RNA sequence: GGGAACGACUCGAGUAGAGUCGAAAAAGCCAUCUUGCUCACGUUUCUCAAAUGGGCAGAGUAUUAAGAUGGUCACCUUUACAUUUGAUAGCGAGGGAACCAUGUUCAGGGGUGAACCGCGAAACAGUACUGAACUCGCCAAUAACAAUCCUGUCUUGAGGUAUUUAAACUUCGGUUUAAAUACCUCAAAAGAAACAACAACAACAAC
Reactivity to 2A3 in 0.01 (KOAc 150mM, MgCl2 10mM, bicine 150mM(pH8.5), 24C), signal-to-noise 2, nucleotides 027 to 156: a000g010c010c000a000u010c000u050u040g010c010u000c000a100c120g030u000u030u000c050u000c040a060a060a030u090g000g000g000c060a020g020a000g030u080a140u120u150a120a070g030a050u000g000g050u180c000a100c000c000u040u130u110a040c030a020u020u020u010g010a000u040a000g010c000g000a150g060g000g000a010a000c000c000a040u090g000u040u020c020a040g000g020g010g000u050g020a000a010c000c000g030c000g030a000a000a030c090a020g020u050a020c010u000g010a020a010c010u010c090g090c050c040a050a040u210a120a140c040a070a080u160c000c040u120g060u150c020u020u000
An RNA of 207 nucleotides, treated with 2A3 and read out base by base. Conditions: 150 mM KOAc, 10 mM MgCl2 and 150 mM bicine (pH 8.5), 24 C.